RNA sequence: GGGAACGACUCGAGUAGAGUCGAAAACGUCGUGAACUAGCGACAAUGCAUUAGGUCCAUCGUUAUCUAACCGAAACAUCGUGACUAGUGGUAGAAUAGAACCAAGAGAGGACGCUGGCAAACAAAGACUGAGUGUAUUAUUCGUAGUACGCUCAGUAAAAGAAACAACAACAACAAC
Reactivity to 2A3 in 0.01 (KOAc 150mM, MgCl2 10mM, bicine 150mM(pH8.5), 24C), signal-to-noise 9, nucleotides 027 to 126: c060g000u010c000g010u020g070a140a060c060u020a070g000c000g010a000c000a010a050u070g010c010a030u040u090a020g000g020u000c010c000a050u030c050g030u030u040a070u030c020u020a020a080c020c020g040a060a030a030c050a080u110c050g080u060g060a050c030u040a040g050u020g060g010u020a020g030a110a050u070a040g040a040a010c030c020a070a000g040a000g010a010g030g000a000c010g000c010u000g000g000c000a030a020a010c020a020a120a010g090
Reactivity to DMS in 0.01 (KOAc 150mM, MgCl2 10mM, bicine 150mM(pH8.5), 24C), signal-to-noise 9, nucleotides 027 to 126: c140g010u010c030g030u010g010a110a100c120u020a120g010c020g010a050c040a110a090u020g000c040a060u010u030a070g000g000u000c010c030a100u010c070g010u010u010a090u010c050u000a070a090c110c050g010a090a090a090c100a060u010c080g010u010g000a090c050u010a060g020u010g000g000u010a040g010a080a120u020a090g010a070a070c050c050a050a060g000a070g000a080g000g000a030c020g010c040u000g000g010c060a060a060a070c120a060a080a080g000
Chemical mapping of a 177-nucleotide RNA with 2A3 and DMS.
2A3 adducts were read by reverse transcription with SuperScript II with manganese.
The 2A3 profile rests on 84,314 reads.
2A3 is a SHAPE reagent: it acylates the 2'-hydroxyl of flexible nucleotides of all four kinds.
Source: RMDB library OK1LIB, as collected in RNAgym.
DMS adducts were read by reverse transcription with MarathonRT.